[RMDB]
RNA sequence: GGGAACGACUCGAGUAGAGUCGAAAAGACGCCUUUAGAAGAAGAGGCUAGGGGGUAUUCCGGUGUGGGAUACUUAGUAAUACGCAACGCUAAUUGCAUAAGAUUGUAGGACGGAAUUUACAGUCUUUAGAGAUAAGCACGUUCGCGUGCUUAUCAACCUCUUGAAAAAGUUCGCUUUUUCAAGAGGAAAAGAAACAACAACAACAAC
Reactivity to DMS in 0.01 (KOAc 150mM, MgCl2 10mM, bicine 150mM(pH8.5), 24C), signal-to-noise 1, nucleotides 027 to 156: g030a140c070g000c050c040u000u000u080a060g040a160a180g030a170a120g010a040g010g000c040u000a090g010g020g020g010g010u000a000u010u010c030c000g030g010u040g040u020g020g000g000a080u000a030c020u000u000a080g030u000a050a110u000a120c040g000c010a050a040c040g000c050u000a110a100u000u030g000c000a150u020a070a060g000a040u000u020g010u000a050g040g000a170c030g000g030a110a300u010u020u000a000c010a030g000u010c010u000u010u010a050g000a150g000a010u010a010a020g020c000a010c000g000u000u010c300g040c020g020u010g000c000u000u020a010u010c010a080a100
Reactivity to 2A3 in 0.01 (KOAc 150mM, MgCl2 10mM, bicine 150mM(pH8.5), 24C), signal-to-noise 5, nucleotides 027 to 156: g040a010c050g020c000c010u050u060u120a200g030a300a010g030a040a010g010a030g020g000c030u040a070g020g020g040g030g000u030a030u030u020c050c040g110g080u180g030u190g070g000g010a010u010a030c000u010u040a020g030u070a070a060u050a110c030g000c040a050a020c040g000c110u080a090a060u130u120g000c010a040u030a120a020g000a020u020u020g020u020a030g000g090a040c090g030g070a080a060u100u060u030a040c000a000g000u000c000u040u090u060a100g020a000g000a040u000a000a000g000c000a010c000g020u040u070c130g010c000g070u000g000c000u000u000a000u000c000a000a000